[RMDB]
RNA sequence: GGGAACGACUCGAGUAGAGUCGAAAAGAUAUGGACUCGACGACGUCCAGCUCGAUGAAAUCGGAAACGAUGGAGAGCUCGGACAUCAGAGUCCUAAGUCAAACGGCAACGGUUCGCCGUUGCCGAACAUGCUGAUGAGGUUCGCCUCAUCAGCAUGAAAAGAAACAACAACAACAAC
Reactivity to DMS in 0.01 (KOAc 150mM, MgCl2 10mM, bicine 150mM(pH8.5), 24C), signal-to-noise 1, nucleotides 027 to 126: g020a020u000a300u000g000g000a020c020u020c000g020a190c190g000a000c070g000u000c010c000a020g000c000u000c000g000a090u000g020a120a070a000u000c010g020g010a160a110a200c030g010a050u000g000g010a140g000a000g000c000u010c170g010g000a010c020a030u000c020a060g000a020g020u010c000c000u010a020a050g010u000c040a060a170a210c030g000g000c010a000a000c000g020g000u000u000c280g020c020c000g000u000u000g000c000c000g000a010a110
Reactivity to 2A3 in 0.01 (KOAc 150mM, MgCl2 10mM, bicine 150mM(pH8.5), 24C), signal-to-noise 1, nucleotides 027 to 126: g040a010u050a050u160g010g000a000c000u020c030g130a130c100g000a020c000g070u000c000c000a000g030c000u000c000g300a300u000g030a040a030a010u010c010g000g000a060a040a060c000g010a020u010g010g040a040g020a000g020c010u060c180g000g010a010c000a060u020c000a020g000a000g000u030c000c020u020a080a000g000u000c060a030a030a090c010g000g000c010a000a000c010g010g110u070u080c200g080c070c000g020u000u000g000c000c000g000a000a000

Chemical mapping of a 177-nucleotide RNA with DMS and 2A3. For DMS, 984 sequencing reads were counted. The reactions ran in a buffer of 150 mM KOAc, 10 mM MgCl2 and 150 mM bicine (pH 8.5), at 24 C. It was measured as part of the RMDB library TTRDEL.